[RMDB]
RNA sequence: GGGAACGACUCGAGUAGAGUCGAAAAUUGCAGUCAUUCCAGCAUUUUACUGGUUUAGAAGCAAAGUCAGUGAAACAUCCAGACGUCGUCGAAUCGCUUGCGCGACCUCGUUCUGGAGCACCUUACCACUAUCUCAAGUAUUCGUACUUGAGAUAGUAAAAGAAACAACAACAACAAC
Reactivity to DMS in 0.01 (KOAc 150mM, MgCl2 10mM, bicine 150mM(pH8.5), 24C), signal-to-noise 9, nucleotides 027 to 126: u010u000g020c020a090g010u010c070a050u000u000c010c010a030g020c130a140u010u020u020u020a070c000u000g010g010u000u000u000a100g010a140a140g000c040a030a020a080g010u000c150a080g000u000g010a100a070a080c210a130u000c000c000a010g000a010c020g010u000c170g000u000c010g010a130a100u020c080g000c060u010u010g010c150g010c010g000a010c000c020u000c010g000u010u010c000u000g000g000a020g010c080a030c050c050u000u010a130c100c070
Reactivity to 2A3 in 0.01 (KOAc 150mM, MgCl2 10mM, bicine 150mM(pH8.5), 24C), signal-to-noise 9, nucleotides 027 to 126: u040u020g000c020a030g120u040c010a020u030u000c010c000a010g040c070a110u090u130u100u270a040c000u000g000g020u010u010u030a100g020a080a010g010c010a020a010a020g090u100c060a020g010u030g100a090a070a070c040a110u000c000c000a000g000a010c000g010u010c000g010u010c010g030a070a100u130c060g040c190u120u200g050c070g000c010g040a000c000c000u020c000g130u300u040c000u000g000g010a000g000c000a020c000c000u030u070a040c010c010